[RMDB]
An RNA of 207 nucleotides, treated with DMS and 2A3 and read out base by base.
Conditions: 150 mM KOAc, 10 mM MgCl2 and 150 mM bicine (pH 8.5), 24 C.
The data come from the RNA Mapping Database (RMDB), library OK3TST.
RNA sequence: GGGAACGACUCGAGUAGAGUCGAAAAAGGCAGCCAUGCUUGGCCGUGCUGAGGACACACUCACACGCAUACAUGCGCUUUGGCAAGACACCUCUGCCAAGCGCAGCACCUGGAAUCACCAGUGUUUAGAGCAAGGUGGUGCUUCGAACAGCACCCAUGGUAAUGAUGACUUCGGUCAUCAUUACCAAAAAGAAACAACAACAACAAC
Reactivity to DMS in 0.01 (KOAc 150mM, MgCl2 10mM, bicine 150mM(pH8.5), 24C), signal-to-noise 2, nucleotides 027 to 156: a110g040g010c040a090g000c030c040a090u000g020c120u000u010g000g020c120c020g020u000g020c070u010g000a070g060g010a300c170a110c220a090c030u000c040a040c020a020c060g020c130a160u000a070c070a120u000g010c000g020c010u000u000u010g010g000c000a020a090g020a180c160a170c130c090u000c020u010g000c000c000a010a110g020c010g040c030a010g030c030a070c060c010u000g010g010a170a200u030c100a140c030c020a150g040u000g000u000u000u000a160g010a120g000c030a050a050g030g010u010g040g020u000g010c000u000u000c030g020a090a180c080a040g000c000a090c010c000c070a110
Reactivity to 2A3 in 0.01 (KOAc 150mM, MgCl2 10mM, bicine 150mM(pH8.5), 24C), signal-to-noise 3, nucleotides 027 to 156: a000g090g000c040a010g100c060c020a060u140g050c080u140u150g090g030c110c010g000u020g060c180u010g010a020g040g100a090c040a020c040a020c180u010c000a000c000a010c010g010c020a040u090a120c070a050u080g000c020g000c020u160u100u160g000g020c020a030a000g050a060c050a060c160c040u070c010u010g000c000c000a000a010g000c000g000c000a000g000c010a020c000c080u020g000g090a060a060u150c030a080c100c000a000g000u010g070u050u020u130a120g010a020g050c030a050a020g000g020u110g010g040u020g010c000u010u100c080g100a100a050c010a060g020c030a020c000c030c020a040